[RMDB]
RNA sequence: GGGAACGACUCGAGUAGAGUCGAAAAGAUAACGAGAGGGCCUUACACUUGCGUGGUGACUGUGAGCUUUGCAUCUAUAACACGAUGGGAAAGAAAGAAAAGAAGCCAUCUGCCUUUGGCACUGCGAGUCAACUGUGAAAUUCGUUUCACAGUUGACAAAAGAAACAACAACAACAAC
Reactivity to 2A3 in 0.01 (KOAc 150mM, MgCl2 10mM, bicine 150mM(pH8.5), 24C), signal-to-noise 3, nucleotides 027 to 126: g030a060u130a080a000c060g020a030g020a040g120g030g000c030c000u040u050a040c060a020c070u100u130g030c040g040u050g030g020u030g030a050c020u040g020u050g100a020g030c000u040u020u070g010c000a010u000c030u040a090u030a170a030c060a020c120g030a040u040g020g030g060a010a110a070g060a020a100a000g110a000a110a030a000g040a070a000g040c020c000a010u000c040u070g030c000c000u120u060u060g010g000c030a010c090u060g020c030g030a020
Reactivity to DMS in 0.01 (KOAc 150mM, MgCl2 10mM, bicine 150mM(pH8.5), 24C), signal-to-noise 5, nucleotides 027 to 126: g000a080u010a060a140c110g000a090g020a100g000g000g010c040c030u000u000a060c110a060c080u000u010g000c120g030u000g010g020u000g020a160c050u000g010u000g000a110g010c030u000u000u000g000c000a040u000c020u000a070u000a090a080c300a090c150g000a060u010g000g010g010a050a040a090g000a050a080a100g010a070a040a080a080g010a070a090g010c020c030a060u010c050u010g020c020c060u000u010u000g000g000c030a040c070u000g010c090g010a150
An RNA of 177 nucleotides, treated with 2A3 and DMS and read out base by base.
It was measured as part of the RMDB library OK2TRN.
Reactivities are rounded to 0.1 and cut off at 0 and 3.